Source: RMDB library M2PK90, as collected in RNAgym. This 177-nucleotide RNA was probed chemically with DMS and 2A3. The RNA was probed in 150 mM KOAc, 10 mM MgCl2 and 150 mM bicine (pH 8.5) at 24 C. For DMS, 8,926 sequencing reads were counted. Values cover nucleotides 27 to 126. 2A3 is a SHAPE reagent: it acylates the 2'-hydroxyl of flexible nucleotides of all four kinds.
[RMDB]
RNA sequence: GGGAACGACUCGAGUAGAGUCGAAAAUAAGAGCAUGUACGAAUCACGAUAUGAGAGUUCCUGGUGUAUCCCGGGUACAAGGAAAGGUAUUAAUCUCCCACUGCGUUCCCUUGCAGUAGGGAUAUAAAUCCCUAACUGGAUUCGUCCAGUUAGGGAUAAAAGAAACAACAACAACAAC
Reactivity to DMS in 0.01 (KOAc 150mM, MgCl2 10mM, bicine 150mM(pH8.5), 24C), signal-to-noise 6, nucleotides 027 to 126: u010a090a090g010a090g020c080a050u000g010u000a080c060g000a090a070u000c050a040c060g000a140u000a100u000g010a090g010a240g010u000u010c010c010u000g000g020u010g020u000a050u000c050c030c010g010g010g010u000a030c070a070a050g010g000a020a030a040g000g010u000a060u010u000a080a090u010c120u000c000c000c010a080c040u000g000c000g000u000u000c020c010c020u010u000g000c010a030g010u000a080g020g010g000a000u000a010u000a050a100
Reactivity to 2A3 in 0.01 (KOAc 150mM, MgCl2 10mM, bicine 150mM(pH8.5), 24C), signal-to-noise 3, nucleotides 027 to 126: u170a010a030g040a040g030c030a030u080g030u110a030c040g050a110a070u090c060a020c110g070a030u050a060u300g090a100g010a010g040u010u030c010c000u000g070g020u060g020u080a050u070c030c010c040g000g060g000u070a060c030a050a030g060g010a090a080a030g040g000u060a070u110u130a120a100u070c030u000c040c000c000a000c000u010g010c000g030u070u040c020c000c000u010u030g000c000a010g000u100a120g000g000g000a000u000a000u000a000a010